Record summary: The data come from the RNA Mapping Database (RMDB), library OK2TRN. Structure probing data (2A3 and DMS) for a 177-nucleotide construct. For 2A3 the reverse transcriptase was SuperScript II with manganese.
[RMDB]
RNA sequence: GGGAACGACUCGAGUAGAGUCGAAAACUUGUAGCCAGGGGCUUCUUCCUGAAAGGCCUCUGCUUUCAGGGCCGGGAUGCCACUGACCAGCACAUCGUGGAUGUGGCGCUGAAGAUGCUGCAAGGUGUAUACGCGGUGGAUUCGUCCACCGCGUAUAAAAAGAAACAACAACAACAAC
Reactivity to 2A3 in 0.01 (KOAc 150mM, MgCl2 10mM, bicine 150mM(pH8.5), 24C), signal-to-noise 1, nucleotides 027 to 126: c000u000u000g030u020a040g000c010c000a000g000g000g000g000c000u060u000c000u200u080c050c060u110g110a130a030a010g020g000c000c020u030c020u010g040c010u040u130u020c010a020g000g030g020c020c000g170g080g030a060u240g050c000c010a020c040u130g040a090c030c020a050g080c100a060c010a070u030c050g050u020g050g030a020u010g070u070g030g000c090g000c090u020g020a020a020g030a090u110g000c020u020g000c000a010a010g050g010u010g060
Reactivity to DMS in 0.01 (KOAc 150mM, MgCl2 10mM, bicine 150mM(pH8.5), 24C), signal-to-noise 2, nucleotides 027 to 126: c020u000u000g020u000a000g000c020c040a010g020g020g030g000c000u000u000c040u010u010c050c090u000g000a090a140a040g000g000c030c050u000c050u000g000c130u000u000u000c010a000g000g020g080c060c040g020g000g010a080u000g020c000c000a030c010u020g010a070c100c080a080g040c090a050c100a300u010c060g010u010g010g010a060u000g010u000g010g010c030g000c000u000g000a040a050g000a120u000g010c000u000g030c000a010a010g010g010u000g010
The RNA was probed in 150 mM KOAc, 10 mM MgCl2 and 150 mM bicine (pH 8.5) at 24 C. For DMS, 1,576 sequencing reads were counted. For DMS the reverse transcriptase was MarathonRT.